Structure probing data (2A3) for a 207-nucleotide construct. Source: RMDB library RNAMAK, as collected in RNAgym. Values cover nucleotides 27 to 156. Conditions: 150 mM KOAc, 10 mM MgCl2 and 150 mM bicine (pH 8.5), 24 C.

RNA sequence: GGGAACGACUCGAGUAGAGUCGAAAACAGCAUUCGUGCUGAUGUCGACCUUUGUGGUUGACUAUCUGGUGGGAGCCAUGAGGGACCCAUUGGGUCUGUAGUGGCGACGAUCACCAGACGAAUCAACCACUCUGGUAUGUUAUAUGUUCGCAUAUAACCGAAACGGUUUAUUCGUAAACCGUUUCGGAAAAGAAACAACAACAACAAC
Reactivity to 2A3 in 0.01 (KOAc 150mM, MgCl2 10mM, bicine 150mM(pH8.5), 24C), signal-to-noise 1, nucleotides 027 to 156: c010a010g020c000a040u020u100c300g090u070g000c000u050g040a160u110g140u070c140g020a030c000c000u000u000u030g020u010g030g000u000u030g010a020c020u010a070u000c000u000g020g000u010g000g040g000a000g000c000c000a000u010g020a100g040g050g000a000c030c040c050a220u090u300g060g000g000u030c100u300g070u160a000g020u000g000g000c000g010a010c000g000a000u000c000a000c000c000a000g000a000c000g060a040a190u000c000a000a010c000c000a000c000u000c000u000g000g020u040a090u180g050u100u000a050u000a000u040g070u030u050c100g050c170a010u070a000u140a070a050